[RMDB]
The record gives the reactivity of an RNA of 207 nucleotides to 2A3. The 2A3 profile rests on 931 reads.

RNA sequence: GGGAACGACUCGAGUAGAGUCGAAAAGUGUCGAAGAUCGAAGCUACCAUUUCCCGGAGUCCGGUAGCGAGAUCGAGAUACAAGAGGACGACGGGUAUCGGAUGACGUGUAAGCUUUACCCGUCCCGCUUACACGUUAUCCAUGAGGGACGGGAUGACGAUGGUCGUACUUUCGAGUACGACCAUCGAAAAGAAACAACAACAACAAC
Reactivity to 2A3 in 0.01 (KOAc 150mM, MgCl2 10mM, bicine 150mM(pH8.5), 24C), signal-to-noise 2, nucleotides 027 to 156: g020u020g030u030c000g110a120a050g010a030u010c010g020a080a000g000c000u000a010c000c000a050u070u070u180c040c010c080g030g030a140g020u060c100c070g000g000u030a010g010c000g030a010g000a000u000c000g000a030g010a010u060a030c010a000a060g060a070g100g000a030c020g030a020c000g000g030g040u100a170u160c120g050g040a050u130g010a050c060g000u000g000u000a000a020g010c010u170u160u180a130c030c000c010g040u020c070c000c000g000c010u020u000a000c010a000c010g000u000u020a040u040c000c000a000u140g040a020g000g020g000a020c020g010g000g000a000u040g070a010
Reactivities are given for positions 27 through 156. Source: RMDB library OK3TST, as collected in RNAgym.